Chemical mapping of a 177-nucleotide RNA with DMS and 2A3. Values cover nucleotides 27 to 126. Source: RMDB library TTRDES, as collected in RNAgym. DMS adducts were read by reverse transcription with MarathonRT. The DMS profile rests on 5,250 reads. Conditions: 150 mM KOAc, 10 mM MgCl2 and 150 mM bicine (pH 8.5), 24 C.

RNA sequence: GGGAACGACUCGAGUAGAGUCGAAAAGAUAUGGAUGUCACCGUUUCACGAUGAGUUUGGUCGGAAACGACCAAACGAGUGAUUGGUGAGCAUCCUAAGUCAAAACACUUUGCGUUCGCGCAAAGUGGUUACUCCAAUCGUUCGCGAUUGGAGUAACAAAAGAAACAACAACAACAAC
Reactivity to DMS in 0.01 (KOAc 150mM, MgCl2 10mM, bicine 150mM(pH8.5), 24C), signal-to-noise 5, nucleotides 027 to 126: g000a040u020a300u000g000g000a010u010g020u000c000a010c000c000g000u000u010u000c000a020c000g000a180u000g000a230g000u000u000u000g000g020u000c010g000g000a100a110a240c010g020a010c010c000a000a000a000c000g000a110g030u000g000a030u010u000g010g000u000g000a160g000c000a010u000c000c000u000a020a090g020u010c050a150a080a100a300c000a000c000u000u000u000g010c000g020u000u020c300g010c020g010c000a010a010a010g010u000g000
Reactivity to 2A3 in 0.01 (KOAc 150mM, MgCl2 10mM, bicine 150mM(pH8.5), 24C), signal-to-noise 4, nucleotides 027 to 126: g040a030u090a040u160g010g000a000u010g040u060c000a000c020c030g240u040u090u050c080a070c120g190a300u300g050a050g090u010u010u000g020g000u000c020g040g000a060a080a100c010g000a000c000c000a000a000a000c000g000a010g000u020g000a020u010u090g000g000u010g030a060g040c000a010u010c000c000u020a090a030g030u010c040a040a000a140a160c010a010c000u030u000u010g000c020g060u050u110c300g000c000g000c190a010a000a000g000u020g010